Structure probing data (DMS and 2A3) for a 207-nucleotide construct.
RNA sequence: GGGAACGACUCGAGUAGAGUCGAAAACAUCUUUUUUGGCGACAUCACAAAAAAGACGGGAAAGGGUGUACGUCACUUCAUCCAACACGAGAAGGUCAAAUUUUCCGAUGACUCUGUGUAGAGAAUCUACUUGAACGGCGAGUUUGUCUGCUCGGAGGAACCGAUAGAGUUUCGACUCUAUCGGUUCAAAAGAAACAACAACAACAAC
Reactivity to DMS in 0.01 (KOAc 150mM, MgCl2 10mM, bicine 150mM(pH8.5), 24C), signal-to-noise 1, nucleotides 027 to 156: c010a000u030c000u000u020u000u010u000u000g040g020c130g040a120c110a070u030c060a070c030a000a000a120a010a010a090g040a000c050g020g000g030a150a030a130g000g020g000u000g020u000a020c090g000u000c040a110c170u000u020c090a030u020c010c040a140a140c100a090c010g000a090g040a040a070g020g010u000c030a070a040a060u000u010u000u010c000c020g030a200u000g030a100c020u000c030u000g040u020g030u000a090g010a170g000a300a100u020c050u000a080c120u000u010g000a050a130c070g070g030c010g020a060g040u000u000u000g020u010c030u010g000c010u000c000g040g020a280g020
Reactivity to 2A3 in 0.01 (KOAc 150mM, MgCl2 10mM, bicine 150mM(pH8.5), 24C), signal-to-noise 2, nucleotides 027 to 156: c050a050u050c020u000u120u050u070u090u020g030g010c060g070a050c110a100u130c050a050c030a120a000a120a000a020a030g060a050c110g030g020g020a060a130a120g010g030g000u010g000u050a120c060g070u030c070a000c000u110u050c010a040u050c000c020a070a060c060a050c100g040a020g010a070a070g010g020u110c030a020a020a020u040u050u020u000c010c050g060a110u150g070a090c040u000c070u080g160u060g010u170a000g010a010g020a080a150u000c000u050a040c060u030u080g030a060a020c000g030g000c020g000a000g010u060u000u040g000u030c000u010g010c010u030c030g050g010a090g060

Annotation:
For DMS the reverse transcriptase was MarathonRT. It was measured as part of the RMDB library OK3TST.